[RMDB]
RNA sequence: GGGAACGACUCGAGUAGAGUCGAAAAGAAGGUGUGUUCGCACACCUUCAAAUAGGACAGACAAAAGCUUCCUGGAGUCAAGACCUGAAAACCAAAGGAGCAAAACCACCUACUUCGGUAGGUGGAAUCCCUCUUAAGUGUUCGCACUUAAGAGGGAAAAAGAAACAACAACAACAAC
Reactivity to 2A3 in 0.01 (KOAc 150mM, MgCl2 10mM, bicine 150mM(pH8.5), 24C), signal-to-noise 1, nucleotides 027 to 126: g000a010a010g000g000u000g020u000g000u010u090c130g050c070a000c010a000c010c020u000u020c010a010a020a010u080a010g050g010a000c060a100g050a030c030a060a120a010a040g010c060u170u070c010c030u010g040g030a030g030u040c040a020a070g040a070c020c010u050g040a050a040a000a060c020c020a020a040a070g010g010a010g040c020a050a000a020a070c010c000a000c000c000u000a000c000u050u060c120g100g000u010a000g000g000u010g000g000a000a000
Reactivity to DMS in 0.01 (KOAc 150mM, MgCl2 10mM, bicine 150mM(pH8.5), 24C), signal-to-noise 2, nucleotides 027 to 126: g000a030a000g010g060u000g000u000g030u000u010c110g020c010a020c000a000c010c000u000u000c000a050a080a080u000a080g010g030a090c080a190g010a040c110a060a090a150a130g000c010u000u000c010c010u000g000g000a200g000u000c040a020a130g000a100c000c010u000g010a040a070a080a110c060c010a010a130a080g000g000a070g000c040a140a070a080a150c000c000a000c000c000u000a010c000u000u010c150g050g000u000a000g010g010u010g000g000a020a060